[RMDB]
RNA sequence: GGGAACGACUCGAGUAGAGUCGAAAAGACCAAUAACAGAAUGCACCACAGCGUAAAAUCAUCUGAUUGGGUGAGUUGGUCGCACCGCCAUUUGACGAACGAACUCCAAGCCUAAGCCGUCUUUGUGAACACGAGCUAGUCUUCGGACUAGCUCGAAGGUACUACAUAUCUUCGGAUAUGUAGUACCAAAAGAAACAACAACAACAAC
Reactivity to 2A3 in 0.01 (KOAc 150mM, MgCl2 10mM, bicine 150mM(pH8.5), 24C), signal-to-noise 6, nucleotides 027 to 156: g030a010c020c000a010a070u150a060a020c050a040g130a160a130u160g030c030a040c040c010a060c060a050g050c030g070u100a020a100a060a070u090c040a010u010c040u080g100a230u150u160g050g020g000u030g030a060g010u010u040g030g010u010c010g000c050a030c020c030g030c020c020a080u090u070u120g050a040c060g010a110a010c030g010a040a020c040u010c030c010a040a050g000c020c010u070a040a020g020c010c010g060u020c050u020u070u070g090u040g060a080a020c060a020c150g000a000g000c000u000a000g000u000c000u010u040c180g010g000a000c000u000a000g000c000u000c000g000a000a000
Reactivity to DMS in 0.01 (KOAc 150mM, MgCl2 10mM, bicine 150mM(pH8.5), 24C), signal-to-noise 2, nucleotides 027 to 156: g010a100c020c020a050a080u010a180a250c060a290g020a080a140u000g020c020a070c040c050a080c050a130g010c020g010u000a090a080a040a070u010c060a050u010c020u000g010a080u000u010g000g040g040u010g010a130g060u000u000g010g010u000c050g000c020a070c050c010g030c040c010a180u000u010u010g010a060c000g020a080a120c040g000a050a070c010u020c040c010a060a180g000c010c030u000a080a130g020c040c030g010u010c040u000u000u000g000u000g000a090a190c080a170c000g000a000g040c010u000a020g010u000c000u000u010c300g010g000a020c000u000a010g010c010u010c000g000a010a020